[RMDB]
Annotation:
Structure probing data (DMS and 2A3) for a 177-nucleotide construct. The DMS profile rests on 7,117 reads. For DMS the reverse transcriptase was MarathonRT.
RNA sequence: GGGAACGACUCGAGUAGAGUCGAAAAGAUAUGGAUCCUGCGAGCCGGACCCUCCAUUCGGAAACGAAUGUGAGGAAGGCUGCAGGAUCCUAAGUCAAAACUCUUCAAGUCUUCGGACUUGAAGAGAUCAACUGAAUAACUUCGGUUAUUCAGUUGAAAAAGAAACAACAACAACAAC
Reactivity to DMS in 0.01 (KOAc 150mM, MgCl2 10mM, bicine 150mM(pH8.5), 24C), signal-to-noise 4, nucleotides 027 to 126: g000a010u000a090u010g000g000a010u000c000c000u000g020c000g020a010g060c000c000g070g010a140c300c000c010u000c000c000a010u000u000c000g010g000a030a030a060c000g010a020a010u000g000u010g040a010g000g020a080a030g030g030c000u010g000c000a010g010g000a000u000c000c000u000a000a040g000u000c010a150a100a160a240c000u000c000u000u000c000a010a000g010u000c000u010u020c250g020g010a020c000u000u000g000a000a010g000a010g000a040
Reactivity to 2A3 in 0.01 (KOAc 150mM, MgCl2 10mM, bicine 150mM(pH8.5), 24C), signal-to-noise 3, nucleotides 027 to 126: g010a000u030a000u060g000g000a010u000c000c000u000g000c060g070a010g000c000c040g120g300a180c030c020c000u000c000c000a010u000u010c000g000g000a020a020a020c010g010a010a010u070g110u300g080a020g000g010a140a230g010g000c010u010g000c000a000g010g000a000u000c000c000u000a000a000g000u020c000a000a040a070a210c000u000c000u000u000c010a020a000g000u000c020u060u290c300g160g010a010c000u000u000g000a010a000g000a000g000a010